[RMDB]
Notes: Source: RMDB library M2RFPK, as collected in RNAgym. The record gives the reactivity of an RNA of 207 nucleotides to 2A3 and DMS. DMS adducts were read by reverse transcription with MarathonRT. Values cover nucleotides 27 to 156. High 2A3 reactivity points to a flexible backbone, as in loops and unpaired stretches. The reactions ran in a buffer of 150 mM KOAc, 10 mM MgCl2 and 150 mM bicine (pH 8.5), at 24 C.

RNA sequence: GGGAACGACUCGAGUAGAGUCGAAAAACCGGCGGUAAAUCAACUCAGCUGAAAGCCGCGAGCGCUUUGGGUGCGAACUCAAAGGACAGCAGAUCCGGUGUAAUUCCGGGGCCGACGGUUAGAGUCCAAAAGAGGUUAUCGUUCGCGAUAACCUCAACUAGUUCUAUGUGUUCGCACAUAGAACUAGAAAAGAAACAACAACAACAAC
Reactivity to 2A3 in 0.01 (KOAc 150mM, MgCl2 10mM, bicine 150mM(pH8.5), 24C), signal-to-noise 3, nucleotides 027 to 156: a000c010c010g000g020c020g010g010u090a130a170a180u160c050a040a070c050u030c110a030g020c020u080g120a210a060a030g050c030c030g090c110g040a040g010c020g010c000u000u010u010g010g000g000u060g040c060g050a080a030c000u000c010a000a010a000g020g040a070c020a020g000c010a020g020a090u050c000c000g010g000u010g020u030a020a060u080u000c000c000g000g000g020g000c000c000g000a010c000g000g010u010u000a070g030a030g120u020c020c000a030a050a010a070g010a000g000g000u010u010a000u000c010g010u040u060c190g010c000g100a000u000a000a000c000c000u000c000a000a000
Reactivity to DMS in 0.01 (KOAc 150mM, MgCl2 10mM, bicine 150mM(pH8.5), 24C), signal-to-noise 1, nucleotides 027 to 156: a030c000c000g000g000c000g020g010u000a050a080a160u000c090a020a120c070u020c040a140g000c020u000g010a120a150a190g010c020c010g010c000g010a090g030c000g020c000u000u000u000g010g030g040u000g070c300g020a200a020c010u000c010a010a030a030g010g010a160c020a160g020c000a140g010a130u000c010c010g020g010u000g000u000a190a300u010u010c000c000g000g020g000g000c010c000g000a130c030g010g030u000u020a050g000a210g000u000c020c020a040a020a070a090g000a030g030g000u000u010a010u000c000g020u010u000c230g020c040g000a010u000a000a000c000c000u010c040a000a050